[RMDB]
RNA sequence: GGGAACGACUCGAGUAGAGUCGAAAAACUUCUCCUCGGCUUGAGCAGCCGCCUCCGCGGCUUCGGCUGACCGUUUCUCUUCGGAUAUCACUUCCUCGUACCAGGAUGGUUUUGUUUCAUCUCGAGGUGAUUUGGUAGCACAUAGGCGUCGUACUAGGAUAUCCGUCCUAUUCGUAGGACGGAUAUCAAAAGAAACAACAACAACAAC
Reactivity to 2A3 in 0.01 (KOAc 150mM, MgCl2 10mM, bicine 150mM(pH8.5), 24C), signal-to-noise 1, nucleotides 027 to 156: a000c010u140u150c030u030c020c010u070c040g000g040c000u100u280g070a050g050c060a000g020c010c000g030c060c070u180c030c150g060c050g070g060c000u060u050c020g000g020c000u020g110a150c010c020g000u030u110u020c050u000c000u060u070c000g000g000a030u020a050u150c050a040c020u070u000c000c000u080c030g020u120a130c030c040a080g100g000a110u050g080g000u040u020u110u170g130u040u120u080c030a040u000c030u040c060g000a000g030g050u030g010a000u020u030u100g010g030u080a020g010c000a030c010a180u070a130g010g070c070g040u060c000g030u110a080c070u090a120g000

Structure probing data (2A3) for a 207-nucleotide construct. The reactions ran in a buffer of 150 mM KOAc, 10 mM MgCl2 and 150 mM bicine (pH 8.5), at 24 C. It was measured as part of the RMDB library OK3TST.